[RMDB]
This 177-nucleotide RNA was probed chemically with 2A3 and DMS.
For 2A3 the reverse transcriptase was SuperScript II with manganese.
The data come from the RNA Mapping Database (RMDB), library OK2TRN.
RNA sequence: GGGAACGACUCGAGUAGAGUCGAAAAGGCCUCGACGGCGCUGCGCGCGAAGCGCUGGCGAUCGACGCCGCCGGUUUGCUGCGGCAGUGCAUCGGCGGCUUGCAGCAGAGCCUGCGGACCCGCAGCAAGCAUUUACGGAGUUCGCUCCGUAAAUGCUAAAAGAAACAACAACAACAAC
Reactivity to 2A3 in 0.01 (KOAc 150mM, MgCl2 10mM, bicine 150mM(pH8.5), 24C), signal-to-noise 1, nucleotides 027 to 126: g010g000c020c000u000c020g050a090c080g110g000c060g000c040u020g020c120g000c040g000c050g290a300a050g000c020g010c020u040g030g050c000g060a120u090c030g060a040c060g000c010c010g000c000c010g060g010u110u080u230g010c010u000g020c000g090g020c060a040g100u090g050c010a060u060c010g010g000c070g000g000c030u030u130g050c000a030g050c020a070g030a050g260c040c000u050g010c000g010g080a070c010c000c000g000c000a030g030c000a010
Reactivity to DMS in 0.01 (KOAc 150mM, MgCl2 10mM, bicine 150mM(pH8.5), 24C), signal-to-noise 2, nucleotides 027 to 126: g000g010c030c010u000c010g000a080c090g010g040c000g020c000u000g000c030g040c040g020c160g000a130a140g010c020g030c010u000g000g000c000g000a130u000c100g010a110c190g010c030c000g010c050c030g000g000u010u000u000g010c000u010g050c000g020g010c080a040g020u000g020c060a120u000c080g020g020c000g010g000c010u010u000g000c060a090g010c030a150g010a120g000c020c010u010g010c010g030g010a130c050c030c000g020c140a070g000c110a100